[RMDB]
RNA sequence: GGGAACGACUCGAGUAGAGUCGAAAAUUGAAGAUCUUCCCUACGAUAGGGAGAACACAGCGAUGAGAGAAUUCCCGAUGUGCGAGUUCUGUAGGAGUGAAUACGAGGAUCCCCUGAAUAGGAGGUAACAAGCUUGAACUUUCGAGUUCAAGCUUGUAAAAGAAACAACAACAACAAC
Reactivity to DMS in 0.01 (KOAc 150mM, MgCl2 10mM, bicine 150mM(pH8.5), 24C), signal-to-noise 2, nucleotides 027 to 126: u010u010g030a170a060g020a090u000c020u000u000c050c000c010u000a090c130g040a140u000a030g010g000g010a050g010a060a060c080a080c060a110g020c070g000a090u000g000a150g010a080g000a060a110u000u000c020c010c000g000a060u000g010u010g000c040g020a110g020u000u000c030u000g020u020a050g020g000a130g000u000g000a100a060u010a120c080g020a070g010g000a050u000c020c020c020c050u010g000a100a030u010a070g000g000a030g000g000u010a080
Structure probing data (DMS) for a 177-nucleotide construct. Reactivities are given for positions 27 through 126. For DMS, 1,374 sequencing reads were counted. The reactions ran in a buffer of 150 mM KOAc, 10 mM MgCl2 and 150 mM bicine (pH 8.5), at 24 C. DMS adducts were read by reverse transcription with MarathonRT. Source: RMDB library OK2TRN, as collected in RNAgym.